[RMDB]
RNA sequence: GGGAACGACUCGAGUAGAGUCGAAAAUAAAAAGCAAAGGAUAGCUAUGCGUUCCGCUUCGUCAUACUUAAUCAGGAAUAUUGAACAUCCAAAAAUCUCCGAGCUCACGUAUGUAGAAUUUUUGAUGCGUGAUAUGCACUUUCGAGUGCAUAUCACGAAAAGAAACAACAACAACAAC
Reactivity to 2A3 in 0.01 (KOAc 150mM, MgCl2 10mM, bicine 150mM(pH8.5), 24C), signal-to-noise 3, nucleotides 027 to 126: u150a000a130a000a000a000g070c060a010a010a050g170g000a050u070a080g000c060u090a080u140g050c010g020u100u060c010c020g020c090u000u110c120g140u040c000a090u050a160c080u160u150a070a070u040c050a040g140g060a160a020u110a230u050u090g000a080a030c060a080u010c000c000a000a000a050a030a030u080c040u000c040c020g010a000g040c010u020c060a030c060g070u080a090u120g040u030a050g040a180a120u060u030u000u020u180g110a140u080g060
Reactivity to DMS in 0.01 (KOAc 150mM, MgCl2 10mM, bicine 150mM(pH8.5), 24C), signal-to-noise 1, nucleotides 027 to 126: u030a060a050a030a030a130g000c010a110a090a130g000g000a060u040a150g050c020u000a050u050g010c050g030u030u000c030c020g000c060u000u010c030g030u000c070a050u050a030c010u000u000a010a090u000c200a160g000g030a040a030u030a230u050u010g000a030a230c120a010u030c000c120a030a000a030a030a100u000c050u040c020c000g000a020g000c080u000c040a030c040g000u000a060u000g000u000a120g000a010a140u000u040u040u000u070g000a230u010g050